[RMDB]
RNA sequence: GGGAACGACUCGAGUAGAGUCGAAAAAUGCGUACAUCAUGCAUGGCGUACUACUAGUCUAUAGUACAUGCCAUGGUACUCUCGUACAGCUAGGAUCGGUACCAUGUGCAGUACUCGGUACUGGUACGUCCAAAGUGGCAUUCGUGCCACUUUGGACAAAAGAAACAACAACAACAAC
Reactivity to DMS in 0.01 (KOAc 150mM, MgCl2 10mM, bicine 150mM(pH8.5), 24C), signal-to-noise 3, nucleotides 027 to 126: a020u010g010c030g030u000a100c160a110u010c120a100u000g000c070a070u000g020g020c040g010u000a050c090u010a060c060u010a050g010u010c080u000a130u000a010g000u000a000c030a080u010g020c030c000a010u000g000g010u000a000c010u010c130u000c070g010u000a080c220a140g030c290u000a090g020g020a070u020c240g000g000u000a010c010c000a030u020g020u020g020c020a080g000u000a000c000u000c050g010g000u000a020c040u010g010g010u000a020c110
Reactivity to 2A3 in 0.01 (KOAc 150mM, MgCl2 10mM, bicine 150mM(pH8.5), 24C), signal-to-noise 3, nucleotides 027 to 126: a000u080g000c040g060u100a230c030a090u100c040a050u230g070c030a000u030g050g000c030g010u010a060c020u020a020c020u010a010g020u000c020u030a120u080a170g000u010a000c080a230u030g000c010c000a000u000g000g000u010a000c010u030c010u010c080g080u200a100c050a120g090c160u200a130g060g110a080u110c080g000g000u010a000c010c000a000u000g150u180g000c010a000g000u000a000c000u010c060g090g030u140a020c010u000g010g020u050a050c030